[RMDB]
The data come from the RNA Mapping Database (RMDB), library RNAMAK.
Chemical mapping of a 207-nucleotide RNA with DMS and 2A3.
2A3 adducts were read by reverse transcription with SuperScript II with manganese.
The 2A3 profile rests on 2,769 reads.

RNA sequence: GGGAACGACUCGAGUAGAGUCGAAAACGGGAUCUUCGGAUCCCGAAAAAAGCGUACUACCGUGGGAGGUCCUGGGAACUACCUGCUUCCCAAAUAGGAAGCAGGCCCAAGGACCAUCGAUCACGGUAUCGCAAAAACACAAUGUUCGCAUUGUGAAGACAGAAUCCAUAUUCGUAUGGAUUCUGUCAAAAGAAACAACAACAACAAC
Reactivity to DMS in 0.01 (KOAc 150mM, MgCl2 10mM, bicine 150mM(pH8.5), 24C), signal-to-noise 1, nucleotides 027 to 156: c040g010g070g030a010u010c010u000u020c300g020g000a000u000c000c010c000g000a000a010a010a060a040a070g010c000g010u000a130c180u000a010c030c010g020u000g000g000g000a100g050g000u000c030c000u030g010g020g010a040a040c030u020a150c000c000u010g000c000u000u020c000c000c010a050a170a140u000a080g030g000a010a020g010c000a040g010g000c010c010c000a060a020g000g000a000c010c000a000u000c140g010a150u010c030a010c040g010g000u000a000u000c000g000c010a040a020a060a080a150c010a060c000a000a040u010g000u000u010c230g060c070a040u000u000g010u000g000a080a160
Reactivity to 2A3 in 0.01 (KOAc 150mM, MgCl2 10mM, bicine 150mM(pH8.5), 24C), signal-to-noise 3, nucleotides 027 to 156: c020g000g070g000a000u020c020u080u080c220g070g000a020u040c000c010c020g000a000a000a000a000a000a000g040c030g040u100a080c070u000a010c050c000g010u010g010g000g000a050g030g000u000c000c000u000g020g010g000a080a020c050u180a130c200c000u000g020c010u020u030c030c020c020a200a230a050u210a010g000g000a000a000g030c010a000g000g000c000c000c000a020a010g000g000a000c000c000a010u010c010g020a050u070c000a000c000g000g000u000a000u010c010g000c000a030a030a030a030a030c000a000c000a000a000u050g050u150u100c210g000c140a000u020u010g010u020g060a030a040